[RMDB]
About this RNA
Structure probing data (2A3 and DMS) for a 177-nucleotide construct. For DMS the reverse transcriptase was MarathonRT. 2A3 adducts were read by reverse transcription with SuperScript II with manganese. 2A3 is a SHAPE reagent: it acylates the 2'-hydroxyl of flexible nucleotides of all four kinds.
RNA sequence: GGGAACGACUCGAGUAGAGUCGAAAAUUGUUUUGCUAAUUGACCUACUUCAACAGAUAAUGUUUUACCUGCCCAUUCUGUUGAAAACACUUGUUUUUCAGACAUAUUUUAAUCUCCUUUGAUUAGGUGCAAUGAAAACGUUCGCGUUUUCAUUGCAAAAAGAAACAACAACAACAAC
Reactivity to 2A3 in 0.01 (KOAc 150mM, MgCl2 10mM, bicine 150mM(pH8.5), 24C), signal-to-noise 1, nucleotides 027 to 126: u010u010g060u100u020u080u060g040c070u120a140a020u040u110g030a000c000c010u000a040c040u030u000c000a020a020c000a010g010a020u120a090a140u100g000u040u130u030u140a070c000c010u100g050c010c000c000a000u040u000c040u000g000u010u020g010a010a010a010a010c080a010c010u050u110g060u010u050u040u000u080c000a030g080a000c010a010u110a080u120u020u020u020a050a050u000c030u040c000c000u100u080u100g090a040u070u280a010g000g040
Reactivity to DMS in 0.01 (KOAc 150mM, MgCl2 10mM, bicine 150mM(pH8.5), 24C), signal-to-noise 1, nucleotides 027 to 126: u000u010g000u020u000u010u020g020c060u040a040a060u010u000g000a110c020c030u000a060c200u000u000c000a020a040c050a010g000a080u010a070a040u020g010u000u010u040u000a000c060c070u000g000c010c030c010a130u030u000c000u010g000u000u000g040a050a000a080a050c180a090c240u040u000g000u000u000u020u000u000c030a050g010a060c120a050u000a050u030u000u000u000a100a060u000c040u050c040c050u000u010u020g000a150u010u010a000g030g010